[RMDB]
RNA sequence: GGGAACGACUCGAGUAGAGUCGAAAACUACCGGACGCUUCUUGCAUGGUACUUUAUGUAUUUCAUGGUAGAUCUCUCUGUUCACAGCACCUAAUUUUCUAGUUAAAAAUAAAUUAUGAACAGCAAAAGGAUGAUUAGAUUUCGAUCUAAUCAUCCUAAAAGAAACAACAACAACAAC
Reactivity to DMS in 0.01 (KOAc 150mM, MgCl2 10mM, bicine 150mM(pH8.5), 24C), signal-to-noise 3, nucleotides 027 to 126: c040u000a030c060c010g010g030a080c210g020c020u000u010c110u010u040g030c020a050u020g030g000u010a020c020u010u010u010a070u060g020u010a050u000u000u010c080a040u020g010g000u000a020g000a090u000c030u000c020u030c010u010g000u000u000c010a050c070a110g000c080a100c080c050u040a050a040u000u020u020u010c030u010a070g000u020u040a020a030a040a090a090u020a050a050a050u010u010a060u000g000a010a030c060a040g020c220a090a050a060
Reactivity to 2A3 in 0.01 (KOAc 150mM, MgCl2 10mM, bicine 150mM(pH8.5), 24C), signal-to-noise 8, nucleotides 027 to 126: c010u020a030c000c000g090g060a050c030g030c050u040u040c020u130u240g050c020a050u070g010g010u030a020c020u110u280u150a090u300g020u020a050u030u120u110c040a040u090g030g010u010a030g010a140u020c010u000c000u000c000u000g010u020u020c010a020c010a060g030c020a050c030c020u040a090a120u050u040u080u070c020u070a070g060u150u130a100a080a030a020a040u160a060a060a030u090u110a090u140g030a020a020c010a030g030c030a020a080a020